[RMDB]
RNA sequence: GGGAACGACUCGAGUAGAGUCGAAAAAACAGCUGCUUCGGCAGCUGUUAACGCUCGCGGCUCGAGGCUCCACGAGCCGGACAGCAGCCAGUCCGCGAGCUAUAGCCUUGGAGUUCGCUCCAAGGAACGACAUAAUAAUUUUCGAAUUAUUAUGUCGAAAAGAAACAACAACAACAAC
Reactivity to 2A3 in 0.01 (KOAc 150mM, MgCl2 10mM, bicine 150mM(pH8.5), 24C), signal-to-noise 5, nucleotides 027 to 126: a000a000c010a000g010c000u010g020c010u040u080c170g110g000c010a000g000c000u000g000u000u000a000a000c050g000c000u000c000g010c010g010g000c020u020c040g060a060g010g000c010u020c030c020a130c150g050a030g060c050c030g030g040a050c050a060g090c020a010g060c040c010a000g050u030c010c000g000c010g010a000g000c000u080a090u110a120g050c000c000u000u000g000g000a010g010u060u120c160g060c090u000c000c000a000a010g000g010a000a040
Reactivity to DMS in 0.01 (KOAc 150mM, MgCl2 10mM, bicine 150mM(pH8.5), 24C), signal-to-noise 7, nucleotides 027 to 126: a010a000c010a010g010c000u010g010c000u000u010c200g030g010c000a010g020c000u000g010u000u000a030a080c210g000c000u000c010g020c010g000g000c030u000c060g010a130g000g000c010u000c020c120a160c160g010a050g030c050c030g010g000a080c190a070g010c090a050g020c060c050a070g000u000c020c020g010c010g000a010g000c010u010a020u000a100g010c000c000u000u000g000g000a010g010u000u010c210g020c000u000c000c000a010a010g000g010a010a050
Conditions: 150 mM KOAc, 10 mM MgCl2 and 150 mM bicine (pH 8.5), 24 C. Structure probing data (2A3 and DMS) for a 177-nucleotide construct. For 2A3 the reverse transcriptase was SuperScript II with manganese. For DMS the reverse transcriptase was MarathonRT.